[RMDB]
RNA sequence: GGGAACGACUCGAGUAGAGUCGAAAAUGGCUGAACGCCUCUAAGUCAGAAACGAUUCUAGAAACUGUAAAUUUACUGCUAAGAGCGUGGAUGUUGUAGGUAACAUUAGACUAUGGGGGUGGGAACCUAUGGAUACAUAUUUCGAUAUGUAUCCAUAAAAAGAAACAACAACAACAAC
Reactivity to DMS in 0.01 (KOAc 150mM, MgCl2 10mM, bicine 150mM(pH8.5), 24C), signal-to-noise 9, nucleotides 027 to 126: u020g010g010c050u010g010a230a170c060g010c020c010u000c010u010a090a050g010u010c010a130g010a120a170a060c030g000a070u020u000c030u000a060g010a130a100a150c090u000g010u010a040a170a120u020u020u010a030c040u010g010c040u000a080a060g000a030g000c020g010u010g000g000a060u000g000u000u000g010u020a080g010g010u020a030a040c040a040u010u010a110g000a040c040u000a050u010g010g000g000g000g010u000g010g000g010a090a070c050c040
Reactivity to 2A3 in 0.01 (KOAc 150mM, MgCl2 10mM, bicine 150mM(pH8.5), 24C), signal-to-noise 9, nucleotides 027 to 126: u070g040g000c070u060g030a100a020c020g010c020c000u000c010u010a030a040g010u010c020a020g100a050a120a020c040g090a170u090u020c020u060a040g060a130a250a100c060u040g030u100a030a070a140u190u230u100a060c030u050g040c020u050a130a030g010a010g040c020g010u030g050g030a040u030g020u070u020g070u100a130g040g120u110a020a000c000a030u040u080a040g010a010c010u040a160u180g010g000g000g000g010u020g000g010g010a010a010c000c000
An RNA of 177 nucleotides, treated with DMS and 2A3 and read out base by base. For 2A3 the reverse transcriptase was SuperScript II with manganese. The reactions ran in a buffer of 150 mM KOAc, 10 mM MgCl2 and 150 mM bicine (pH 8.5), at 24 C. For DMS the reverse transcriptase was MarathonRT.